[RMDB]
RNA sequence: GGGAACGACUCGAGUAGAGUCGAAAACAAGUUGGCUUCGGCCAACUUGAAAAGAAUGGUAGACUGAGACCGCUAAACUCACAUAACCAAAAAUAGCGGAAAAAAGAUCAGUGUUCGCACUGAUCAACUAUGCUCAGGUGUUCGCACCUGAGCAUAGAAAAGAAACAACAACAACAAC
Reactivity to 2A3 in 0.01 (KOAc 150mM, MgCl2 10mM, bicine 150mM(pH8.5), 24C), signal-to-noise 1, nucleotides 027 to 126: c010a020a000g000u000u000g040g010c020u030u080c250g060g000c000c030a010a000c000u000u000g000a000a020a020a020g090a030a020u160g130g020u110a010g010a100c060u050g020a010g050a070c050c000g000c010u040a160a100a070c010u040c010a050c010a070u090a070a080c020c000a060a000a010a030a070u040a030g030c040g000g020a000a030a000a020a000a040g010a000u000c000a000g000u000g030u040u110c170g070c070a000c020u000g000a000u000c000a000a000
Reactivity to DMS in 0.01 (KOAc 150mM, MgCl2 10mM, bicine 150mM(pH8.5), 24C), signal-to-noise 1, nucleotides 027 to 126: c000a000a020g000u010u000g000g020c000u000u000c210g010g000c000c000a000a010c010u000u010g020a060a050a070a190g000a130a090u000g010g000u000a040g040a110c150u000g000a040g000a130c000c000g000c020u000a020a120a040c040u000c000a060c090a110u010a080a230c100c050a000a010a080a080a150u020a000g010c030g000g000a000a020a020a060a120a020g000a000u000c000a010g010u000g000u000u040c220g020c010a000c000u010g010a000u000c000a010a110
An RNA of 177 nucleotides, treated with 2A3 and DMS and read out base by base. 2A3 adducts were read by reverse transcription with SuperScript II with manganese. Reactivities are rounded to 0.1 and cut off at 0 and 3. It was measured as part of the RMDB library M2PK50.